[RMDB]
RNA sequence: GGGAACGACUCGAGUAGAGUCGAAAAAUGAGCGUUGUGAAUGAAUCGAGGAAAAGAAGACGUCUUAUUCACAGCGAAAAAGAAACGCGUCGUUUAGACCUCGGAGAAGAAGAUGACUUAGAGUUAAACCUAGGAGCAGUUUCGACUGCUCCUAGGUAAAAGAAACAACAACAACAAC
Reactivity to DMS in 0.01 (KOAc 150mM, MgCl2 10mM, bicine 150mM(pH8.5), 24C), signal-to-noise 1, nucleotides 027 to 126: a100u000g010a100g010c010g040u000u000g030u000g000a010a000u000g000a110a110u000c010g000a130g010g010a070a020a160a140g000a110a090g020a010c030g030u000c100u020u030a090u000u000c000a050c060a070g040c110g010a040a060a060a080a100g000a070a090a130c270g010c070g000u000c030g010u010u010u000a040g010a110c000c030u000c010g000g020a090g000a060a080g000a040a040g000a060u000g000a110c070u000u000a160g000a130g020u030u010a090a080

Chemical mapping of a 177-nucleotide RNA with DMS. It was measured as part of the RMDB library OK2TST. The RNA was probed in 150 mM KOAc, 10 mM MgCl2 and 150 mM bicine (pH 8.5) at 24 C.